Overview: This 177-nucleotide RNA was probed chemically with 2A3 and DMS. DMS adducts were read by reverse transcription with MarathonRT.
RNA sequence: GGGAACGACUCGAGUAGAGUCGAAAAGAUAUGGAGCCCAUCCCUCAACAGCUCGGAAACGAGACAUGAGGAGAUGUGGCUCCUAAGUCAAAAGCAUAUAUCGGUGCUUCGGCACCGAUAUAUGCAACCAUUGACUGUACUUCGGUACAGUCAAUGGAAAAGAAACAACAACAACAAC
Reactivity to 2A3 in 0.01 (KOAc 150mM, MgCl2 10mM, bicine 150mM(pH8.5), 24C), signal-to-noise 2, nucleotides 027 to 126: g050a040u100a060u150g000g000a000g000c000c040c000a000u000c000c010c000u010c000a080a170c050a240g050c000u020c000g010g030a130a100a040c010g010a000g050a070c030a120u130g000a010g040g100a240g030a030u010g030u270g020g010c000u000c010c000u010a010a000g030u000c020a020a040a050a130g020c000a000u000a010u000a000u000c010g020g000u010g000c010u100u100c270g090g010c000a000c000c000g000a000u000a000u000a000u010g000c000a000a000
Reactivity to DMS in 0.01 (KOAc 150mM, MgCl2 10mM, bicine 150mM(pH8.5), 24C), signal-to-noise 3, nucleotides 027 to 126: g000a030u000a300u000g010g000a020g000c000c010c010a040u000c000c000c000u000c000a030a060c290a170g000c000u000c000g000g000a100a060a180c000g000a010g000a060c070a190u000g000a010g000g010a120g020a010u000g010u020g020g000c000u000c000c000u000a000a050g000u010c030a090a090a080a150g000c010a020u000a000u000a000u000c000g000g010u000g010c000u000u020c190g030g010c000a030c000c000g000a000u000a000u000a000u000g010c000a030a070